This 177-nucleotide RNA was probed chemically with 2A3. The 2A3 profile rests on 604 reads. 2A3 adducts were read by reverse transcription with SuperScript II with manganese. Conditions: 150 mM KOAc, 10 mM MgCl2 and 150 mM bicine (pH 8.5), 24 C. Reactivities are rounded to 0.1 and cut off at 0 and 3. Reactivities are given for positions 27 through 126.
RNA sequence: GGGAACGACUCGAGUAGAGUCGAAAAGGAAAUGAGCGGUAAGUCCGCUGUAGGUGGUUCUAGGUGUUCCCUUCCGUAGGUUGGCCAUAGCCUAGACAUAACGAGCCUGCAGGGCACGCUCAUUUUAUCUGCCAUCUGCGUUCGCGCAGAUGGCAGAAAAAGAAACAACAACAACAAC
Reactivity to 2A3 in 0.01 (KOAc 150mM, MgCl2 10mM, bicine 150mM(pH8.5), 24C), signal-to-noise 2, nucleotides 027 to 126: g020g010a000a000a000u010g000a000g000c030g000g010u000a000a000g110u020c000c070g040c180u000g000u000a000g060g100u100g000g120u150u010c000u040a000g040g040u060g000u300u300c000c000c050u000u000c060c010g300u240a150g000g000u000u000g000g050c020c020a040u130a030g000c020c000u000a000g000a000c000a000u160a030a150c080g010a010g030c000c000u000g000c000a050g000g000g000c010a000c000g020c000u000c010a000u000u000u000u030a040